[RMDB]
RNA sequence: GGGAACGACUCGAGUAGAGUCGAAAAUACUUAGUACGCGCGUAGUUGCAGGCAUUCCGGGUGCAGCAACUCACGCGGAAGACUUUUCCCAGAGUGUGCGCUUCAACUGGCGUGCUGAGUAGUGCACGAAUUGCACGUACGUUCGCGUACGUGCAAAGUGAUUUAUGUCAUUCGUGACAUAAAUCACAAAAGAAACAACAACAACAAC
Reactivity to DMS in 0.01 (KOAc 150mM, MgCl2 10mM, bicine 150mM(pH8.5), 24C), signal-to-noise 3, nucleotides 027 to 156: u000a070c040u000u000a090g040u010a090c020g000c010g030c020g020u000a040g020u000u000g000c020a160g020g000c010a060u000u000c010c300g000g020g070u000g000c000a300g000c030a010a030c010u010c050a030c000g010c020g000g010a080a170g010a090c140u000u000u000u000c010c010c010a220g010a110g010u010g020u000g010c040g020c010u010u020c060a080a160c070u000g020g030c090g020u020g020c010u000g010a080g020u000a080g040u000g010c020a070c030g010a090a240u010u000g000c000a000c000g040u010a010c010g020u000u000c260g060c000g030u000a000c010g000u000g000c010a000a000a050
Reactivity to 2A3 in 0.01 (KOAc 150mM, MgCl2 10mM, bicine 150mM(pH8.5), 24C), signal-to-noise 7, nucleotides 027 to 156: u130a010c000u010u010a000g010u010a000c010g010c000g000c000g020u010a010g020u000u010g000c030a130g130g000c020a040u100u110c120c190g220g070g030u030g000c020a020g000c000a000a010c000u030c040a010c010g000c010g010g000a000a010g150a090c040u220u190u050u010c000c000c000a000g010a000g020u140g000u000g000c010g000c020u030u050c070a300a300c130u040g020g000c000g010u010g010c000u000g000a000g000u030a010g010u010g010c000a000c030g020a060a090u050u010g000c000a000c000g000u000a000c000g010u020u050c170g000c000g100u000a000c000g000u000g000c000a000a000a000